[RMDB]
RNA sequence: GGGAACGACUCGAGUAGAGUCGAAAACUUUGAGUUGACACCUUUCCUCACAACAAGCUUUAUUAAGUAUGAUGGUAGCAUGCAUCCAGAGAUCCACAGAUUACUCAAGCCUUAUAAGCUAAGGGAAGGUGAAUCUAAGGUUCGCCUUAGAUUCACCAAAAGAAACAACAACAACAAC
Reactivity to DMS in 0.01 (KOAc 150mM, MgCl2 10mM, bicine 150mM(pH8.5), 24C), signal-to-noise 2, nucleotides 027 to 126: c080u000u000u000g010a030g040u000u020g000a210c070a090c020c040u010u000u000c010c000u010c060a130c120a100a100c110a090a090g000c050u020u020u000a100u010u000a050a070g020u010a120u010g010a090u000g010g040u010a030g040c030a060u000g000c070a020u000c030c040a080g000a110g010a100u000c020c030a050c110a090g020a110u000u000a040c060u000c040a070a090g010c020c020u000u000a070u010a030a050g020c150u000a050a070g000g000g010a120a080
Reactivity to 2A3 in 0.01 (KOAc 150mM, MgCl2 10mM, bicine 150mM(pH8.5), 24C), signal-to-noise 2, nucleotides 027 to 126: c040u070u070u250g080a070g040u070u050g060a040c020a000c020c000u010u010u000c000c040u040c010a040c010a130a070c010a150a060g030c010u110u110u110a200u190u230a080a080g060u070a060u190g060a020u100g070g060u060a000g100c020a000u080g020c010a020u020c010c000a030g000a020g000a110u060c010c010a050c020a090g100a120u000u120a060c050u010c060a030a020g040c000c000u150u080a150u030a220a020g000c060u030a060a060g000g000g030a030a040